[RMDB]
RNA sequence: GGGAACGACUCGAGUAGAGUCGAAAAAGAACCAUUUCUAGUUAUUUCACUUUUUGAUACUUGUCAACUAUCUUAGUAAAAAUACAGAACUCUAUAAAGAACCACAGAAAAAUCGACAGCAAUGACAUCGUUCAAUUCGAUUCGUCGAAUUGAACGAAAAAGAAACAACAACAACAAC
Reactivity to 2A3 in 0.01 (KOAc 150mM, MgCl2 10mM, bicine 150mM(pH8.5), 24C), signal-to-noise 2, nucleotides 027 to 126: a000g030a000a010c000c030a080u040u030u000c000u000a100g020u030u020a060u000u090u050c000a000c030u180u140u000u000u260g020a000u000a010c010u040u070g020u050c050a090a100c030u030a000u000c010u040u000a010g040u010a130a220a000a150a000u070a060c070a000g090a110a110c010u080c000u080a220u030a180a070a120g050a080a140c070c000a000c160a130g300a120a200a000a000a000u040c010g020a030c020a000g060c000a050a110u000g010a020c000a000